[RMDB]
RNA sequence: GGGAACGACUCGAGUAGAGUCGAAAAUGGGGCGACACCCCUCCAUAAGGCUGCCUCAGAGCGGCUAGCCGCCGGUGAGUUGCAUUCACUAUGCAGAAGCCGCAAAAUAAUUUUAUGGGACGCGAAAGGGAUGCAGAAGCUUCGGUUUUUGCAUCCCAAAAGAAACAACAACAACAAC
Reactivity to DMS in 0.01 (KOAc 150mM, MgCl2 10mM, bicine 150mM(pH8.5), 24C), signal-to-noise 7, nucleotides 027 to 126: u010g000g000g000g010c030g000a100c190a120c040c010c010c050u000c020c020a040u010a040a060g000g000c100u010g000c020c010u010c070a070g000a150g020c010g000g000c010u000a030g000c050c060g010c020c170g010g000u010g000a050g010u040u020g000c180a120u040u000c070a040c040u010a070u010g000c010a050g000a150a090g020c010c000g000c030a100a040a070a080u030a110a050u020u020u000u010a040u020g000g000g010a070c130g000c080g020a080a100a150
Reactivity to 2A3 in 0.01 (KOAc 150mM, MgCl2 10mM, bicine 150mM(pH8.5), 24C), signal-to-noise 5, nucleotides 027 to 126: u040g010g000g000g010c030g050a030c020a050c050c000c010c000u040c010c000a020u020a030a020g030g000c010u030g000c000c000u060c030a020g020a020g050c030g020g000c010u020a030g050c020c020g010c000c010g030g000u030g010a090g030u100u110g030c000a010u020u040c020a030c070u070a050u170g000c000a000g010a060a000g000c000c000g000c010a000a020a000a020u090a010a020u020u020u020u030a030u040g000g000g050a030c070g030c010g090a120a050a080
Structure probing data (DMS and 2A3) for a 177-nucleotide construct. For DMS the reverse transcriptase was MarathonRT. Source: RMDB library OK1LIB, as collected in RNAgym. Values cover nucleotides 27 to 126. The RNA was probed in 150 mM KOAc, 10 mM MgCl2 and 150 mM bicine (pH 8.5) at 24 C.